[RMDB]
RNA sequence: GGGAACGACUCGAGUAGAGUCGAAAAAUGAAUUGAUUCGUCAAUUCAUGACCGCAAGCGAGCCGAAAGGCAAUUUAUGCGUACGCUGGCGAAAGCCUAAAAAUCAUCGUGUCUUCGGACACGAUAAGUACCUCAGCACAUUCGUGUGCUGAGGUACAAAAGAAACAACAACAACAAC
Reactivity to 2A3 in 0.01 (KOAc 150mM, MgCl2 10mM, bicine 150mM(pH8.5), 24C), signal-to-noise 1, nucleotides 027 to 126: a010u000g000a010a010u000u020g010a010u080u000c160g070u000c090a000a000u000u000c000a010u030g050a030c000c020g020c060a020a060g010c020g080a010g000c000c000g050a070a030a010g070g010c060a000a000u060u020u050a200u150g050c030g000u030a030c030g010c040u030g000g030c000g040a050a000a020g080c010c020u070a070a100a050a030a040u090c010a020u000c010g000u000g010u000c030u030u050c220g050g000a000c010a010c000g000a000u000a020a010
Reactivity to DMS in 0.01 (KOAc 150mM, MgCl2 10mM, bicine 150mM(pH8.5), 24C), signal-to-noise 1, nucleotides 027 to 126: a000u020g010a000a020u010u000g020a060u020u010c220g010u020c000a000a000u000u000c000a010u000g000a170c070c010g020c070a040a100g010c030g000a210g000c000c000g010a110a120a160g040g000c000a160a010u070u010u000a080u010g000c120g010u010a100c100g000c060u000g030g010c000g000a060a070a150g010c000c000u020a000a060a030a160a030u030c160a040u000c000g040u010g000u000c000u000u060c240g020g000a010c000a000c010g000a010u000a020a100